The data come from the RNA Mapping Database (RMDB), library OK2TRN. Chemical mapping of a 177-nucleotide RNA with DMS and 2A3. For 2A3 the reverse transcriptase was SuperScript II with manganese. For DMS, 4,620 sequencing reads were counted. For DMS the reverse transcriptase was MarathonRT. The 2A3 profile rests on 4,079 reads. The reactions ran in a buffer of 150 mM KOAc, 10 mM MgCl2 and 150 mM bicine (pH 8.5), at 24 C. Values cover nucleotides 27 to 126.
RNA sequence: GGGAACGACUCGAGUAGAGUCGAAAAGCACAGCCUGCGCGCACUGGAGCGGCCACUGCUGCCUGUGGAACACGCCCGUCCAGGUGAAGGCCUGUGAUGGCUACUACGUCUACAACCUGACUGCGCCUAACGACUGGAAAUUCGUUUCCAGUCGUUAAAAAGAAACAACAACAACAAC
Reactivity to DMS in 0.01 (KOAc 150mM, MgCl2 10mM, bicine 150mM(pH8.5), 24C), signal-to-noise 4, nucleotides 027 to 126: g000c040a030c080a130g020c040c020u010g010c070g020c050g000c060a080c070u000g010g000a150g010c050g000g000c030c060a060c090u010g000c030u000g010c030c040u000g010u000g010g000a060a070c090a090c120g010c120c030c020g010u000c010c010a030g020g020u010g000a180a100g010g000c020c010u000g000u020g000a050u010g000g000c050u010a070c070u010a060c120g000u010c030u000a060c080a070a150c080c020u000g000a090c060u000g010c040g020c040c110
Reactivity to 2A3 in 0.01 (KOAc 150mM, MgCl2 10mM, bicine 150mM(pH8.5), 24C), signal-to-noise 3, nucleotides 027 to 126: g010c020a010c000a050g020c000c000u080g020c040g000c000g010c020a020c070u080g040g020a070g060c040g040g030c020c020a100c090u130g030c020u030g020c010c010u040g010u010g050g010a050a020c040a030c130g020c010c000c020g010u030c010c010a000g040g000u020g120a110a040g160g020c000c000u060g050u120g040a070u050g000g000c000u030a040c030u030a020c100g030u000c000u030a060c020a090a050c000c020u010g060a060c040u020g020c010g000c010c000